[RMDB]
RNA sequence: GGGAACGACUCGAGUAGAGUCGAAAAUCAAAAGACACUGGACGCUACGCCGUCCUGAACAAUACUUAAGCUGCUGACGCGUCAUCAUUCCCCAAAUGACUCGGCAGUAGAGGUGCCAAAGGACUCGCUUACCCCUUUGGUUCGCCAAAGGGGUAAGAAAAGAAACAACAACAACAAC
Reactivity to 2A3 in 0.01 (KOAc 150mM, MgCl2 10mM, bicine 150mM(pH8.5), 24C), signal-to-noise 5, nucleotides 027 to 126: u110c040a020a060a030a010g100a020c030a040c080u010g010g010a000c010g040c060u220a060c120g120c200c000g030u010c000c000u000g010a040a030c050a070a110u150a070c050u140u140a130a010g020c000u010g020c000u000g010a010c010g000c020g040u000c000a020u000c020a060u070u110c000c000c000c000a010a060a000u020g010a000c000u000c010g020g000c000a000g000u000a010g010a040g000g040u060g030c020c010a110a090a070g050g020a060c020u020c040g040
Reactivity to DMS in 0.01 (KOAc 150mM, MgCl2 10mM, bicine 150mM(pH8.5), 24C), signal-to-noise 4, nucleotides 027 to 126: u060c110a150a040a070a080g030a110c260a090c040u010g020g000a030c040g020c020u050a140c170g000c150c010g000u000c010c000u010g000a090a100c200a100a040u010a090c050u030u010a100a130g030c040u010g000c000u000g000a030c120g000c140g000u030c000a000u010c080a100u000u010c000c000c000c020a040a110a010u010g000a020c010u000c020g010g010c020a010g020u000a010g000a030g000g000u010g000c020c010a080a050a090g000g000a050c070u000c070g010
An RNA of 177 nucleotides, treated with 2A3 and DMS and read out base by base. The RNA was probed in 150 mM KOAc, 10 mM MgCl2 and 150 mM bicine (pH 8.5) at 24 C. For DMS the reverse transcriptase was MarathonRT. It was measured as part of the RMDB libraries RFM100 and RFMREP.